[RMDB]
RNA sequence: GGGAACGACUCGAGUAGAGUCGAAAAGAUAUGGACACCUGUACCAGGUCAACAGCAAGAGUCGGAAACGACUCUUGACAUGACCGUACUGGGUGUCCUAAGUCAAAGGGGUGCUUCGGCACCCCAAGCCAUGUAUACCGUUCGCGGUAUACAUGGCAAAAGAAACAACAACAACAAC
Reactivity to DMS in 0.01 (KOAc 150mM, MgCl2 10mM, bicine 150mM(pH8.5), 24C), signal-to-noise 2, nucleotides 027 to 126: g010a040u010a300u000g010g020a000c000a010c000c000u000g000u000a020c020c150a250g040g000u000c000a010a160c290a140g000c000a010a010g000a020g020u000c000g010g000a140a140a280c000g020a010c000u000c000u000u000g000a050c050a200u000g000a040c010c000g000u000a000c000u000g040g000g000u000g060u000c000c000u000a000a060g000u000c040a140a130a160g000g010g000g040u000g020c000u000u000c220g020g020c010a010c000c000c000c000a000a010
The record gives the reactivity of an RNA of 177 nucleotides to DMS.
The DMS profile rests on 1,783 reads.
The data come from the RNA Mapping Database (RMDB), library TTRDES.
Reactivities are given for positions 27 through 126.